[RMDB]
RNA sequence: GGGAACGACUCGAGUAGAGUCGAAAAGAUAUGGACAUCCGGUAGGGAGCUGAUCGGAAACGAUACCAGCUUUGAUCUACGAUGUCCUAAGUCAAAAGCGUGCUGAUUGUUCGCAAUCAGCACGCAACGGUAUUAAUGACUUCGGUCAUUAAUACCGAAAAGAAACAACAACAACAAC
Reactivity to 2A3 in 0.01 (KOAc 150mM, MgCl2 10mM, bicine 150mM(pH8.5), 24C), signal-to-noise 4, nucleotides 027 to 126: g010a010u050a030u090g000g000a000c010a020u030c130c280g290g030u020a040g050g190g000a010g000c000u000g020a000u020c020g000g000a050a020a010c010g000a000u070a250c140c010a010g030c010u140u090u180g140a140u070c000u010a000c020g000a000u010g010u000c000c000u000a050a030g020u010c030a060a040a020a180g010c020g000u010g000c000u000g000a010u000u040g050u090u200c300g000c200a010a000u000c000a000g000c000a010c010g000c000a000a000
Reactivity to DMS in 0.01 (KOAc 150mM, MgCl2 10mM, bicine 150mM(pH8.5), 24C), signal-to-noise 3, nucleotides 027 to 126: g010a020u000a300u010g010g000a030c000a000u010c060c300g030g010u000a020g000g000g010a010g020c010u000g000a030u000c000g010g000a040a040a110c010g010a020u000a080c290c010a020g010c010u000u010u020g000a080u000c010u010a030c050g000a030u000g000u000c000c000u000a020a040g000u010c020a070a110a100a120g010c000g040u000g010c000u000g030a040u000u000g000u000u010c250g010c020a020a000u000c000a000g000c000a000c010g000c000a000a010